Structure probing data (2A3) for a 207-nucleotide construct. Conditions: 150 mM KOAc, 10 mM MgCl2 and 150 mM bicine (pH 8.5), 24 C. For 2A3, 599 sequencing reads were counted. The data come from the RNA Mapping Database (RMDB), library M2RFPK.

RNA sequence: GGGAACGACUCGAGUAGAGUCGAAAAAUAAUUUAGAAAGGAGAUUCCGCCCCAGCUUGCGGUGCGGCCGAAAGGCUGUAAGGCAUCCCGGAGAGGGGAGGCAAGGUGAAAGCCAAAGCUGUAGAGUAAUAGUGGGUCUUGUUCGCAAGACCCACAACAUCGUGUAAUGCUUCGGCAUUACACGAUGAAAAGAAACAACAACAACAAC
Reactivity to 2A3 in 0.01 (KOAc 150mM, MgCl2 10mM, bicine 150mM(pH8.5), 24C), signal-to-noise 1, nucleotides 027 to 156: a000u060a040a120u110u060u300a060g050a080a080a020g170g010a120g140a180u200u020c000c000g020c000c030c040c000a000g000c000u020u030g020c020g000g000u000g010c000g010g020c010c020g040a040a000a000g000g000c010u000g060u040a050a100g010g000c000a020u040c020c040c050g100g020a110g060a100g110g010g000g000a000g020g000c010a000a020g030g000u010g000a080a000a010g010c000c010a020a000a000g000c000u000g020u050a050g030a040g110u070a160a090u080a100g000u000g000g000g000u000c000u000u020g020u090u040c070g000c180a000a000g000a000c000c000c000a000c000a000a000